[RMDB]
RNA sequence: GGGAACGACUCGAGUAGAGUCGAAAAACGGUGCGGAAGUUCGCGCUUCCGUGAAACGCGAAAAUCGGACGGUGGCUGCAAGUCGCCUCGCAAAACCGCGGCAAGUGGAGUUAGCGAGAGGAGGCUGAAACCAUCCAACACUUCGGUGUUGGAUGAAGAUCCAGUACAGUUUCGACUGUACUGGAUCAAAAGAAACAACAACAACAAC
Reactivity to 2A3 in 0.01 (KOAc 150mM, MgCl2 10mM, bicine 150mM(pH8.5), 24C), signal-to-noise 3, nucleotides 027 to 156: a000c040g030g000u060g010c020g010g020a030a000g020u110u170c050g030c040g010c090u030u020c020c000g010u000g020a070a070a020c070g000c020g070a010a010a020a140u120c050g040g020a020c040g020g050u030g000g020c010u090g030c070a040a040g020u020c030g040c030c000u010c010g010c020a060a070a000a040c010c020g010c020g080g030c130a190a040g000u040g020g030a080g010u060u060a030g030c010g020a030g000a050g040g030a020g010g000c010u000g020a080a010a010c020c000a000u000c000c000a000a000c000a000c000u040u070c200g070g000u000g000u000u000g000g000a000u000g000a020a010
Reactivity to DMS in 0.01 (KOAc 150mM, MgCl2 10mM, bicine 150mM(pH8.5), 24C), signal-to-noise 2, nucleotides 027 to 156: a040c020g050g010u000g000c030g030g030a010a080g030u000u000c190g000c300g030c010u000u020c010c100g020u020g000a050a050a090c020g000c010g000a090a100a100a100u000c070g030g000a070c100g050g000u000g020g030c000u000g020c050a060a040g020u010c030g000c000c000u000c030g030c020a060a080a100a130c050c050g010c000g010g000c100a110a090g020u000g020g010a140g000u000u000a140g040c030g000a100g020a090g020g020a060g010g050c010u000g000a140a070a150c120c010a020u000c000c020a020a000c010a000c000u000u000c300g090g010u000g000u000u000g010g000a000u000g000a040a070

Conditions: 150 mM KOAc, 10 mM MgCl2 and 150 mM bicine (pH 8.5), 24 C. Structure probing data (2A3 and DMS) for a 207-nucleotide construct. The DMS profile rests on 2,738 reads. The data come from the RNA Mapping Database (RMDB), library M2RFPK.